[RMDB]
RNA sequence: GGGAACGACUCGAGUAGAGUCGAAAAAGCACUGGUACGAUACGUCGUACCAGUGCAGUCGUUUGGAUGGAACGCAAUUAAAUACAUGUGUGACGUGUAUUUGCGAACGACGUAAUUAUUUUUCAAAAUCACGCUAUCGUGUUCGCACGAUAGCGAAGAUCAGCUGCAUGUUCGCAUGCAGCUGAUCAAAAGAAACAACAACAACAAC
Reactivity to 2A3 in 0.01 (KOAc 150mM, MgCl2 10mM, bicine 150mM(pH8.5), 24C), signal-to-noise 1, nucleotides 027 to 156: a000g000c000a000c000u000g000g000u000a010c000g040a030u000a020c300g090u000c000g000u000a000c000c000a000g020u010g010c000a000g000u000c010g020u040u060u010g230g000a090u040g040g160a080a030c010g030c000a000a060u130u000a060a090a000u060a000c000a000u060g020u100g070u160g200a060c050g000u000g010u010a010u000u030u030g000c050g000a000a000c000g010a000c040g110u030a070a050u140u120a150u000u080u000u100u180c160a100a070a060a060u240c060a020c030g020c010u020a000u020c000g000u000g060u060u140c090g030c100a000c000g000a000u010a000g000c000g000a000a000